[RMDB]
RNA sequence: GGGAACGACUCGAGUAGAGUCGAAAAGGUCAGGCCUGAUCGGAAACAGCAGCAGGUGAGUCCGCCUUAUGUGAAGGAUCGGCUGAAACACGAGGAAAUACUGAGCCAACGCAAGACGGUAGCCGAAUAAUUCUGAGCGGUUCGCCGCUCAGAAUUAAAAAGAAACAACAACAACAAC
Reactivity to 2A3 in 0.01 (KOAc 150mM, MgCl2 10mM, bicine 150mM(pH8.5), 24C), signal-to-noise 2, nucleotides 027 to 126: g040g000u060c020a010g090g110c030c120u240g010a070u030c000g070g080a100a040a000c060a100g060c030a000g000c010a010g010g040u020g040a050g040u060c020c070g010c000c000u050u160a010u000g090u040g080a190a000g030g020a030u060c020g040g000c040u080g010a000a160a000c030a000c000g100a030g000g050a090a090a070u190a100c000u010g000a020g000c030c050a000a000c020g000c020a060a020g040a000c050g010g000u050a020g000c030c030g000a090a000
Reactivity to DMS in 0.01 (KOAc 150mM, MgCl2 10mM, bicine 150mM(pH8.5), 24C), signal-to-noise 2, nucleotides 027 to 126: g000g040u020c050a110g010g020c040c000u010g030a150u050c000g020g000a210a100a060c070a250g000c000a140g010c100a000g030g030u030g020a110g000u020c070c050g000c010c010u040u010a110u020g000u020g000a100a110g020g000a040u000c020g000g050c100u010g020a080a090a040c090a050c120g010a080g000g000a100a010a040u000a110c080u040g030a050g000c050c000a010a070c000g000c110a050a080g040a070c040g030g060u020a080g100c090c040g000a110a040